[RMDB]
RNA sequence: GGGAACGACUCGAGUAGAGUCGAAAAGUGAACGAUCUCGGUUGUUUCUCUGAAGGCAUGAUCACCCCGUCCGAUGCGGGAGUUCGUGCUUCCGUCGAACGCGAAAGUCGGACGGCGGCCAUGAGUCAAUAUGUUUAAGGCUUCGGCCUUAAACAAACGUAGACAGGGGAUUCGUCCCCUGUCUACGAAAAGAAACAACAACAACAAC
Reactivity to 2A3 in 0.01 (KOAc 150mM, MgCl2 10mM, bicine 150mM(pH8.5), 24C), signal-to-noise 1, nucleotides 027 to 156: g150u090g080a170a050c030g030a150u030c020u060c180g020g000u010u010g010u010u010u010c050u000c080u010g070a110a030g090g000c000a000u030g000a020u070c020a010c020c010c000c000g010u010c010c010g000a010u110g020c000g060g060g040a000g000u100u230c170g100u250g090c000u010u030c000c010g020u070c040g120a170a050c060g000c080g180a180a150a000g010u020c000g010g000a010c000g000g000c000g000g000c000c000a020u030g030a010g040u020c000a010a110u110a060u300g000u000u000u000a000a000g000g000c000u000u040c210g090g000c000c000u000u000a000a010a000c000a000a020a000
The record gives the reactivity of an RNA of 207 nucleotides to 2A3. For 2A3, 720 sequencing reads were counted. For 2A3 the reverse transcriptase was SuperScript II with manganese. The reactions ran in a buffer of 150 mM KOAc, 10 mM MgCl2 and 150 mM bicine (pH 8.5), at 24 C.